This 177-nucleotide RNA was probed chemically with DMS. Values cover nucleotides 27 to 126.
RNA sequence: GGGAACGACUCGAGUAGAGUCGAAAAGAGCUGGUUGCGCAGCUUGCCGACGAUGAUGUAGCCCUUCGCCUGCGGGAUGGUCGCGAGCGUCGGCUUCACCUGGCCCUGAUAGUGAUCGGUCUCGAAAAAUGGCCUCAUUAUUCGUAAUGAGGCCAUUAAAAGAAACAACAACAACAAC
Reactivity to DMS in 0.01 (KOAc 150mM, MgCl2 10mM, bicine 150mM(pH8.5), 24C), signal-to-noise 2, nucleotides 027 to 126: g020a040g010c030u000g000g020u010u020g020c130g000c030a030g020c050u010u010g020c020c010g020a070c050g020a060u000g000a110u000g010u000a090g000c040c020c070u000u000c030g000c020c040u000g000c080g010g010g020a120u000g010g010u000c040g030c040g010a100g010c020g030u010c140g010g000c000u000u000c090a050c040c040u000g000g010c040c130c010u000g010a110u000a110g020u000g010a060u000c060g020g000u000c040u000c010g020a040a060a090
The RNA was probed in 150 mM KOAc, 10 mM MgCl2 and 150 mM bicine (pH 8.5) at 24 C.